[RMDB]
RNA sequence: GGGAACGACUCGAGUAGAGUCGAAAACUUAAGGUAGCCAAAUGCCUCGUCAUCUAAUUAGUGACGCGCAUGAAUGGAUCAAUGAGAUUCCCACUGUCCCUAACUACUAUACAGCGAAACCACUGCUGUCAGGCGUUAUUUUCGAAUAACGCCUGACAAAAGAAACAACAACAACAAC
Reactivity to DMS in 0.01 (KOAc 150mM, MgCl2 10mM, bicine 150mM(pH8.5), 24C), signal-to-noise 1, nucleotides 027 to 126: c000u000u000a040a000g050g000u000a010g000c200c050a000a100a030u000g000c020c050u000c020g020u000c000a040u000c040u000a150a130u000u000a240g000u000g000a000c000g000c300g000c000a070u000g000a090a160u150g000g000a160u000c000a120a170u040g000a000g090a000u000u000c000c040c000a090c000u000g020u000c030c020c050u000a050a070c050u000a020c070u070a110u180a090c000a000g050c000g000a070a050a020c000c050a000c260u000g000c000u000
Reactivity to 2A3 in 0.01 (KOAc 150mM, MgCl2 10mM, bicine 150mM(pH8.5), 24C), signal-to-noise 2, nucleotides 027 to 126: c050u110u090a090a050g120g000u070a080g060c030c000a010a130a000u050g000c000c020u060c030g000u000c000a060u010c010u090a210a210u160u160a090g020u000g000a000c020g050c000g010c010a000u020g070a150a090u090g020g020a040u030c030a070a090u170g000a010g000a070u040u050c010c000c010a030c060u050g030u020c020c020c000u010a090a090c020u090a040c000u000a050u000a130c010a020g000c020g060a050a000a010c020c000a090c050u070g020c040u020